[RMDB]
RNA sequence: GGGAACGACUCGAGUAGAGUCGAAAACAUGGUGGCAAGUACGGCGCGAUAUUGCCCCACCUGCAAUAGAAGCGUAGACAUCAACUGUAGCGAGAGCUACUCAACUUAUGGACCUUAGAGCAUGCGAAGACGACCGGUCCUGUCGGAAUUCGCUAGAGCGUAUCGGAUAGUUCGCUAUCCGAUACGCAAAAGAAACAACAACAACAAC
Reactivity to 2A3 in 0.01 (KOAc 150mM, MgCl2 10mM, bicine 150mM(pH8.5), 24C), signal-to-noise 2, nucleotides 027 to 156: c020a100u140g020g010u050g040g010c080a070a080g060u050a050c150g050g000c020g020c020g020a030u010a030u100u030g010c050c070c000c000a020c000c000u080g000c000a000a000u050a050g130a220a000g000c000g020u000a020g040a090c000a180u090c040a120a160c120u100g040u040a000g030c000g050a090g000a000g090c010u020a030c000u010c020a120a100c020u090u190a060u110g090g000a000c000c050u030u070a090g000a050g070c040a040u140g030c000g020a000a000g100a030c010g000a000c000c060g020g110u000c000c000u010g010u000c010g000g050a120a070u000u040c020g000c000u050a050g000a000
Background
Structure probing data (2A3) for a 207-nucleotide construct. The 2A3 profile rests on 693 reads. The RNA was probed in 150 mM KOAc, 10 mM MgCl2 and 150 mM bicine (pH 8.5) at 24 C.